[RMDB]
Annotation:
Structure probing data (DMS and 2A3) for a 177-nucleotide construct.

RNA sequence: GGGAACGACUCGAGUAGAGUCGAAAACUCGAAUCUUUCGAGAUUCGAGACUCUCGAAGUGUCAAUAAGAUCGAAAAGAACGCCGAGCAUAAAAUAGACACAAUGCUGCUUGAUUCGUCAAGCAGAAUACAUACGUGCUCUUCGGAGCACGUAUGUAAAAAGAAACAACAACAACAAC
Reactivity to DMS in 0.01 (KOAc 150mM, MgCl2 10mM, bicine 150mM(pH8.5), 24C), signal-to-noise 1, nucleotides 027 to 126: c020u000c000g000a000a000u000c000u000u000u000c300g020a020g000a000u000u010c010g000a010g000a090c230u000c040u000c070g000a040a100g010u000g010u000c020a140a060u020a120a180g000a100u000c010g000a060a100a100a150g000a080a110c250g020c180c040g020a040g000c110a100u000a020a010a030a090u010a160g000a000c030a080c050a150a110u000g010c010u000g000c010u000u000g000a020u000u030c210g050u000c000a000a000g000c000a000g030a070a090
Reactivity to 2A3 in 0.01 (KOAc 150mM, MgCl2 10mM, bicine 150mM(pH8.5), 24C), signal-to-noise 2, nucleotides 027 to 126: c000u010c000g000a020a020u040c010u040u140u110c250g110a040g000a010u000u000c020g000a010g030a000c030u010c010u050c030g020a190a080g000u010g000u000c030a020a060u120a080a040g040a120u090c060g030a060a040a160a130g110a090a050c120g000c130c010g040a010g000c090a060u240a140a120a040a020u150a090g010a000c030a030c000a000a110u100g020c010u000g000c000u010u000g010a050u050u090c230g060u040c060a000a000g000c010a010g040a010a030

Values cover nucleotides 27 to 126. The data come from the RNA Mapping Database (RMDB), library M2PK50. For 2A3 the reverse transcriptase was SuperScript II with manganese. The reactions ran in a buffer of 150 mM KOAc, 10 mM MgCl2 and 150 mM bicine (pH 8.5), at 24 C.